[RMDB]
RNA sequence: GGGAACGACUCGAGUAGAGUCGAAAAACACUAGGAAAAGAAGAAUGCCACAGUCUAGGUACCAUUAAAGUCCACCUUGAGAAAGUGCUCUUUAAUUUGAAGUUUGAGUGAUUAGAAAAUGUUCACCAAUUUAAGAAGGGGAAGAAGGCAGAACAGAAGGUAUAUACCUGUUCGCAGGUAUAUACCUAAAAGAAACAACAACAACAAC
Reactivity to DMS in 0.01 (KOAc 150mM, MgCl2 10mM, bicine 150mM(pH8.5), 24C), signal-to-noise 2, nucleotides 027 to 156: a050c040a070c020u000a090g020g000a100a050a100a110g000a110a090g000a080a040u000g010c010c030a090c030a060g020u010c050u000a060g000g040u000a040c070c070a070u000u000a000a060a030g020u000c020c030a000c010c000u000u020g030a190g000a170a110a090g000u000g000c020u000c020u000u000u000a010a050u000u020u000g000a050a080g000u000u000u000g020a150g030u010g000a070u000u000a070g010a120a040a080a050u000g000u000u000c020a050c020c030a020a100u000u000u000a090a070g010a050a130g030g010g010g000a040a050g010a050a050g010g000c030a090g010a050a080c110a090g010a110
Reactivity to 2A3 in 0.01 (KOAc 150mM, MgCl2 10mM, bicine 150mM(pH8.5), 24C), signal-to-noise 5, nucleotides 027 to 156: a000c050a020c060u100a050g050g040a060a080a040a060g070a050a020g040a070a030u070g030c030c020a040c020a030g040u030c060u080a030g010g010u040a060c050c010a040u070u080a050a030a000g010u010c020c010a020c040c010u030u010g030a040g020a090a050a000g010u010g020c000u010c010u000u090u050a110a150u070u070u160g090a080a030g040u020u090u060g060a060g000u040g020a030u020u090a040g080a030a070a020a040u100g030u020u010c000a010c030c000a020a030u040u050u100a070a050g020a040a040g010g000g010g010a000a020g010a010a010g030g000c040a020g020a040a020c030a040g160a170